[RMDB]
RNA sequence: GGGAACGACUCGAGUAGAGUCGAAAAGAUAUGGAUGCUGGUACAUUCUACGAAUCACUGAACUACGACAUAUGGUCGGAAACGACCAUAGUCGCAGUGACUAUAGAAUGUACCAGCAUCCUAAGUCGUGUUCUAUCCUGUUCGCAGGAUAGAACACAAAAGAAACAACAACAACAAC
Reactivity to DMS in 0.01 (KOAc 150mM, MgCl2 10mM, bicine 150mM(pH8.5), 24C), signal-to-noise 1, nucleotides 027 to 126: g020a120u030a300u000g000g000a010u000g030c000u000g000g040u000a010c000a000u000u000c000u040a000c200g010a080a110u010c010a010c020u010g010a100a080c250u040a300c010g000a010c000a110u000a000u000g010g000u000c000g030g000a050a050a230c050g020a010c000c000a010u000a010g000u010c000g000c030a000g010u010g030a030c000u000a300u020a010g000a010a000u000g000u000a000c000c000a010g010c000a000u000c000c000u000a000a060g000u010c080
Conditions: 150 mM KOAc, 10 mM MgCl2 and 150 mM bicine (pH 8.5), 24 C. An RNA of 177 nucleotides, treated with DMS and read out base by base. Reactivities are rounded to 0.1 and cut off at 0 and 3. Source: RMDB library TTRINS, as collected in RNAgym. For DMS, 1,002 sequencing reads were counted.